[RMDB]
RNA sequence: GGGAACGACUCGAGUAGAGUCGAAAAGAACCCCUAUACUUGUAUAGGCGAUUAAUAAAUCUUCUGUAAAUGCUGUAAGAGGAUUACCCCUUGAGGUUUCAGCACUAGGCUGCUCUAGCGAUUAAUCACAACGAUUUGGUCUUCGGACCAAAUCGAAGUUAUUGCGUUCGUUCGCGAACGCAAUAACAAAAGAAACAACAACAACAAC
Reactivity to 2A3 in 0.01 (KOAc 150mM, MgCl2 10mM, bicine 150mM(pH8.5), 24C), signal-to-noise 1, nucleotides 027 to 156: g040a010a050c000c000c000c000u040a050u000a110c040u100u130g100u050a050u040a050g010g020c010g090a090u040u100a160a070u090a090a130a040u000c000u050u030c020u030g200u250a040a100a120u160g010c030u040g020u050a080a000g000a000g030g000a000u000u000a100c020c020c020c020u090u040g000a130g150g070u010u050u150c040a010g040c040a030c030u100a030g100g110c060u050g000c000u040c030u050a000g010c040g100a040u030u130a080a030u120c180a060c030a190a130c020g000a000u000u000u090g000g050u010c000u020u060c280g100g000a030c030c030a000a000a000u000c000g000a000a000